[RMDB]
RNA sequence: GGGAACGACUCGAGUAGAGUCGAAAAUCGUGUGACGUGGAUUGGCAACGUCGAUGUAGGGAGACAGUUACCAAUUGACACCCUUCUCAAUAACUACGCAGCUGUGGUGCUGGCCACAGGCGUGGAUCCCGAGGUCGUGAUUCGUCACGACCUCGGGAAAAGAAACAACAACAACAAC
Reactivity to 2A3 in 0.01 (KOAc 150mM, MgCl2 10mM, bicine 150mM(pH8.5), 24C), signal-to-noise 2, nucleotides 027 to 126: u150c030g010u100g040u070g140a080c030g000u070g060g030a080u000u020g000g090c040a020a050c080g030u030c000g010a070u130g070u260a130g030g040g060a110g020a020c080a060g030u000u000a040c020c020a050a040u060u090g080a100c040a050c030c010c000u080u110c030u020c020a020a190u190a170a070c020u050a000c000g000c020a200g120c110u010g000u040g010g000u090g170c200u150g300g050c000c000a000c000a000g000g030c000g000u000g000g000a010u000
This 177-nucleotide RNA was probed chemically with 2A3. It was measured as part of the RMDB library OK1LIB. 2A3 adducts were read by reverse transcription with SuperScript II with manganese.